[RMDB]
This 177-nucleotide RNA was probed chemically with DMS and 2A3. Source: RMDB library OK1LIB, as collected in RNAgym. The DMS profile rests on 1,098 reads.

RNA sequence: GGGAACGACUCGAGUAGAGUCGAAAAGACUACUGGUGAAAUUACCUCGAAAGAUGUCGCUGCAGAAUGGGCUAUACCUCUUUUACCUAAAGAGCAUGUAACUUUACUGGAUAUAGCUAGAAAAGGCCGCAGCCGUAUUUUUCGAAAUACGGCUGCGAAAAGAAACAACAACAACAAC
Reactivity to DMS in 0.01 (KOAc 150mM, MgCl2 10mM, bicine 150mM(pH8.5), 24C), signal-to-noise 1, nucleotides 027 to 126: g030a070c080u000a050c080u000g000g000u000g030a060a130a090u010u000a080c090c040u000c000g040a080a190a160g000a040u020g000u000c030g010c020u000g000c000a140g000a070a060u020g000g000g000c010u000a000u030a050c140c030u000c000u000u000u000u030a100c300c080u040a090a020a020g000a010g000c280a080u070g000u000a060a070c050u050u000u010a040c020u020g020g000a130u060a030u010a010g000c010u010a130g000a050a080a070a070g000g040c070
Reactivity to 2A3 in 0.01 (KOAc 150mM, MgCl2 10mM, bicine 150mM(pH8.5), 24C), signal-to-noise 1, nucleotides 027 to 126: g010a000c120u180a030c080u120g020g040u040g030a140a110a100u090u030a100c000c010u030c000g120a130a060a050g000a000u070g020u070c010g000c000u070g000c020a040g150a030a160u120g130g000g000c040u040a020u080a030c060c000u000c040u130u050u060u140a070c060c060u010a020a040a000g010a000g060c090a030u110g040u030a060a030c050u060u070u100a030c070u110g010g000a000u040a000u000a130g000c000u040a010g050a000a140a000a060g050g000c000